[RMDB]
RNA sequence: GGGAACGACUCGAGUAGAGUCGAAAAAUACACUACGAAAGUACAAAGAAGCAAUCAAACCGAGCAGUGAAAUGAUGGCUUCAGUCCAAAAUGGGCAAACACUGCAGACGGAGCCAAAGGCAAAUAAUCAUAUGUGAAUGUUCGCAUUCACAUAUGAAAAAGAAACAACAACAACAAC
Reactivity to DMS in 0.01 (KOAc 150mM, MgCl2 10mM, bicine 150mM(pH8.5), 24C), signal-to-noise 4, nucleotides 027 to 126: a100u010a060c050a060c090u010a050c050g010a110a080a110g000u000a050c140a050a080a080g010a030a010g010c020a060a050u000c050a030a090a110c060c030g030a130g010c040a030g010u010g010a080a050a100u000g010a050u000g010g010c020u010u000c030a090g000u000c030c030a040a060a090a090u010g020g000g000c050a080a070a110c030a010c040u000g010c080a110g010a130c070g010g000a120g010c030c030a010a090a090g010g020c070a050a040a050u010a080a120
Reactivity to 2A3 in 0.01 (KOAc 150mM, MgCl2 10mM, bicine 150mM(pH8.5), 24C), signal-to-noise 3, nucleotides 027 to 126: a010u110a020c020a000c040u100a010c050g100a140a030a040g050u030a050c040a020a140a070g040a040a000g010c020a000a040u050c020a070a020a090c030c010g020a020g030c010a030g010u060g110a040a080a160u090g030a020u060g030g000c000u040u050c040a010g010u040c010c020a010a120a130a230u160g000g000g000c030a020a020a000c050a000c040u020g000c010a010g030a030c030g040g000a010g000c010c020a050a030a000g040g020c020a080a040a030u120a070a090